RNA sequence: GGGAACGACUCGAGUAGAGUCGAAAAAGCUUUCUAGGGCUUGGAAUUCAACCUCCAGAGACAAGCCUCGGGCUUAUGGUUGCUGACGGGAGAAACUACAUCGCAAUUGCAUGGUGGCUCAUCGCCUCCCGUAAAUAGGAUUCGUCCUAUUUACGGGAAAAGAAACAACAACAACAAC
Reactivity to DMS in 0.01 (KOAc 150mM, MgCl2 10mM, bicine 150mM(pH8.5), 24C), signal-to-noise 3, nucleotides 027 to 126: a030g020c040u000u020u020c080u020a070g010g000g010c010u010u000g010g010a090a090u010u040c090a040a070c090c040u010c020c040a160g010a090g030a100c140a010a020g000c000c010u000c210g030g020g000c010u000u000a040u000g010g000u050u010g000c030u020g000a030c080g010g000g000a090g000a070a050a080c130u000a050c070a020u010c100g000c040a150a030u050u000g010c040a060u010g030g010u010g020g000c060u000c080a060u020c090g010c070c020u010
Reactivity to 2A3 in 0.01 (KOAc 150mM, MgCl2 10mM, bicine 150mM(pH8.5), 24C), signal-to-noise 6, nucleotides 027 to 126: a000g090c100u130u140u080c090u160a120g060g000g000c020u040u000g040g060a160a170u130u070c020a060a070c030c020u080c030c020a050g010a010g010a060c030a060a030g000c000c010u030c050g010g020g010c010u050u050a050u150g100g010u070u120g050c040u030g030a040c020g020g010g020a020g050a040a080a030c080u160a070c020a080u100c070g030c110a090a280u090u150g010c020a020u100g060g000u020g080g000c000u010c070a100u080c100g020c010c010u010